[RMDB]
RNA sequence: GGGAACGACUCGAGUAGAGUCGAAAAGUUCAUAAAGUUUGUAUAGAGGAAAAGUAUCUUAGCAAUGAAAACAAGCAUAUUAGAUUUCAGUGCACUCCUGGAUGUUUCAGAUGGUUCAGCUGGUUACGUGGUCGGGGUGAAUCGGAGUACAUAUGUAGCCUCAUAAAAUCUUCGGAUUUUAUGAGGCAAAAGAAACAACAACAACAAC
Reactivity to DMS in 0.01 (KOAc 150mM, MgCl2 10mM, bicine 150mM(pH8.5), 24C), signal-to-noise 1, nucleotides 027 to 156: g000u000u000c050a040u000a070a090a200g010u000u010u000g030u020a100u000a110g030a100g000g030a040a060a030a110g040u010a080u020c040u000u010a110g010c030a120a040u010g000a050a050a030a080c060a070a090g040c100a060u010a100u000u000a050g000a170u000u010u000c000a060g040u000g040c010a100c050u000c050c010u010g010g000a070u000g060u000u000u010c000a120g000a100u000g020g000u000u000c060a120g030c020u000g020g010u000u000a030c180g020u000g020g090u010c070g030g010g020g030u000g000a070a070u000c070g060g000a090g020u000a060c090a060u000a030u010g020u000a230
Reactivity to 2A3 in 0.01 (KOAc 150mM, MgCl2 10mM, bicine 150mM(pH8.5), 24C), signal-to-noise 2, nucleotides 027 to 156: g000u060u030c030a040u150a160a100a060g000u080u110u020g020u000a050u060a110g060a010g060g000a020a020a050a070g030u050a030u080c080u070u040a000g050c030a070a180u070g070a040a060a000a070c060a000a010g020c030a040u080a160u190u080a080g070a140u050u170u160c060a030g020u000g020c010a000c050u010c000c030u020g000g050a020u030g080u040u060u050c040a040g000a060u010g030g010u020u020c010a000g030c040u060g030g030u020u020a010c040g030u060g000g060u030c010g000g000g050g000u040g040a010a030u050c020g000g030a010g000u010a010c010a090u230a060u300g060u180a050